[RMDB]
RNA sequence: GGGAACGACUCGAGUAGAGUCGAAAACAAGCAUGGUUUGGUGGCCCUCCUCAGAACUUUUUGAGCACCAUCAUCUACUCUUCUGAUGGCGGAACCACAUGGACACGAGCUGCGGCUGACGGCACAGCCUCAACUCUUCCGUCUUUCUCAACUACGGAUAUAGCCGGACAUUCGUGUCCGGCUAUAUAAAAGAAACAACAACAACAAC
Reactivity to 2A3 in 0.01 (KOAc 150mM, MgCl2 10mM, bicine 150mM(pH8.5), 24C), signal-to-noise 1, nucleotides 027 to 156: c070a010a020g080c010a060u090g000g080u000u060u060g030g030u020g040g020c000c000c000u030c020c010u030c010a080g000a100a110c060u120u130u050u170u220g020a020g010c030a000c030c050a050u060c010a020u000c010u110a090c020u060c020u150u020c060u050g040a060u090g030g000c030g010g040a030a040c040c030a030c030a070u110g050g050a010c030a010c100g010a030g040c010u000g000c020g000g000c020u020g040a100c090g000g000c050a010c000a170g020c000c000u000c000a020a080c000u020c000u100u060c030c030g000u020c000u060u080u020c060u030c030a100a220c040u300a030c050g170g050